RNA sequence: GGGAACGACUCGAGUAGAGUCGAAAACGGUAUUGGUCAAGGCUAUACCGACAGCGCACCUUCAAAAGGGCGCUUAAUCCCCGGCCAAGCGCCGAAAUAUGAAUAGACACCGCUGGGCUGUUAGGGCAAAACAUGGCGAUCUUCGGAUCGCCAUGAAUCCUCAAUCUAACUUCGGUUAGAUUGAGGAAAAAGAAACAACAACAACAAC
Reactivity to DMS in 0.01 (KOAc 150mM, MgCl2 10mM, bicine 150mM(pH8.5), 24C), signal-to-noise 1, nucleotides 027 to 156: c030g010g020u040a030u010u000g070g000u000c040a140a180g040g040c030u000a150u000a020c010c000g020a150c220a090g050c000g000c030a140c000c010u030u000c190a090a140a200a040g030g000g000c000g000c020u000u000a060a090u000c000c040c060c010g000g000c040c030a030a130g000c070g080c080c060g000a010a070a040u020a190u000g040a280a150u010a190g000a130c050a040c030c010g010c030u010g010g080g050c040u000g000u010u000a070g010g000g010c040a120a130a040a130c040a010u000g040g030c010g030a030u000c000u000u020c300g020g020a010u000c000g060c000c000a000u000g000a020a090